Conditions: 150 mM KOAc, 10 mM MgCl2 and 150 mM bicine (pH 8.5), 24 C. Chemical mapping of a 170-nucleotide RNA with 2A3 and DMS. The data come from the RNA Mapping Database (RMDB), library 15KLIB. Values cover nucleotides 27 to 129. DMS adducts were read by reverse transcription with MarathonRT. For 2A3, 48,373 sequencing reads were counted. The DMS profile rests on 79,244 reads.
RNA sequence: GGGAACGACUCGAGUAGAGUCGAAAAGGUCGGACCGCGAGGAGGUGGAGAUGCCAUGCCGACCCGAAGAGGAAAGAAGGACGCGAGACGCAAACCUGUGAGUGGACACCCGCUUUAUUCACUGGGGGAACUGUACACUUCGGUGUACAGAAAAGAAACAACAACAACAAC
Reactivity to 2A3 in 0.01 (KOAc 150mM, MgCl2 10mM, bicine 150mM(pH8.5), 24C), signal-to-noise 9, nucleotides 027 to 129: g030g000u040c010g000g010a060c020c020g030c050g040a070g020g020a020g010g020u070g010g010a100g000a040u150g040c020c010a060u130g010c000c010g020a040c000c010c010g020a020a020g020a010g030g010a030a010a010g030a010a010g020g010a010c020g050c030g050a100g010a020c040g020c080a080a100a070c000c010u040g020u040g040a010g010u050g000g020a020c010a080c020c010c010g040c040u090u100u080a140u070u090c070a050c110u050g010g000g000g000g000a020a040
Reactivity to DMS in 0.01 (KOAc 150mM, MgCl2 10mM, bicine 150mM(pH8.5), 24C), signal-to-noise 9, nucleotides 027 to 129: g000g030u010c030g020g010a090c040c070g020c090g000a010g010g010a030g000g010u010g000g030a080g020a060u050g000c060c060a070u050g000c020c020g020a040c070c000c060g030a000a000g020a090g030g030a020a030a030g030a030a030g000g010a040c100g000c100g000a070g000a060c070g000c100a040a060a160c050c030u000g030u010g010a030g010u000g020g010a070c080a100c040c030c050g040c090u040u040u030a060u010u010c060a080c050u000g010g030g000g000g040a070a130